[RMDB]
RNA sequence: GGGAACGACUCGAGUAGAGUCGAAAAACCUUUGUGCUGACGAUACGAAUAAGAACCAUCGAUCAUAGGGAGCUUCCCAUUGGGAAGCAUCGAUCUAUGGGAGGUUCGCUGAACGUCAGCACUCUGGUAAACCGGACACCGUUCGCGGUGUCCGGAACAUAGUUCCGGACUUCGGUCCGGAACUAUGAAAAGAAACAACAACAACAAC
Reactivity to 2A3 in 0.01 (KOAc 150mM, MgCl2 10mM, bicine 150mM(pH8.5), 24C), signal-to-noise 1, nucleotides 027 to 156: a010c000c000u000u000u000g010u000g000c000u000g010a010c000g020a050u030a240c080g060a210a120u260a300a120g050a070a020c020c030a150u250c040g040a020u070c020a030u100a110g070g030g070a040g000c000u020u000c060c070c060a300u270u300g000g010g000a000a030g020c020a040u090c040g050a020u020c000u000a000u000g000g050g000a020g000g120u000u000c010g000c060u050g120a240a090c000g000u000c000a000g000c000a000c000u000c000u000g000g020u100a110a100a150c000c000g020g000a000c010a000c030c000g050u130u130c280g010c050g000g030u000g010u000c000c000g010g000a000a000
This 207-nucleotide RNA was probed chemically with 2A3. The reactions ran in a buffer of 150 mM KOAc, 10 mM MgCl2 and 150 mM bicine (pH 8.5), at 24 C. For 2A3, 772 sequencing reads were counted. Source: RMDB library RNAMAK, as collected in RNAgym.